This 207-nucleotide RNA was probed chemically with 2A3 and DMS. For DMS, 2,418 sequencing reads were counted. Source: RMDB library OK3TST, as collected in RNAgym. The RNA was probed in 150 mM KOAc, 10 mM MgCl2 and 150 mM bicine (pH 8.5) at 24 C. For 2A3, 1,068 sequencing reads were counted.
RNA sequence: GGGAACGACUCGAGUAGAGUCGAAAAUCAUACAAAGACUGAUCAUUCUGUUGCCUCUUCACCCUCUUCAGCCAUUUCCACAGCAACACCUUCUCCUAAAUCCACUGAGCAGAGAAGCAUAAACAGUGUUACCAGCCUUAACAGUCCUCACAGUGGAGACCUAUUAGCCAUUCGUGGCUAAUAGGUCAAAAGAAACAACAACAACAAC
Reactivity to 2A3 in 0.01 (KOAc 150mM, MgCl2 10mM, bicine 150mM(pH8.5), 24C), signal-to-noise 2, nucleotides 027 to 156: u040c000a040u090a080c060a000a120a030g140a150c110u100g020a110u070c010a100u100u120c040u180g070u030u050g020c000c020u030c000u120u030c010a090c010c010c000u050c030u080u030c010a020g010c000c000a080u060u010u000c040c040a060c000a040g020c000a020a060c010a040c040c030u020u010c000u000c010c010u060a050a060a070u040c000c000a010c040u010g000a000g010c020a000g020a010g020a110a010g010c020a040u120a060a080a010c080a040g000u000g010u100u010a030c030c000a010g010c000c000u020u030a050a050c000a020g040u020c010c010u060c030a050c000a020g020u050g050g010a030
Reactivity to DMS in 0.01 (KOAc 150mM, MgCl2 10mM, bicine 150mM(pH8.5), 24C), signal-to-noise 1, nucleotides 027 to 156: u000c060a180u010a300c070a100a060a130g010a070c040u010g000a060u000c020a120u000u000c040u000g020u000u000g000c020c020u010c000u000u000c010a060c060c020c060u000c020u000u000c020a080g030c000c030a090u000u000u000c020c030a080c040a020g000c030a110a130c010a080c070c040u000u000c010u000c000c040u010a070a140a070u000c020c020a070c080u020g000a180g000c130a100g010a060g000a070a070g030c100a070u000a010a050a080c070a120g040u020g020u010u010a100c040c000a070g000c040c000u000u020a060a130c010a090g010u000c000c010u000c020a070c000a030g000u000g000g010a300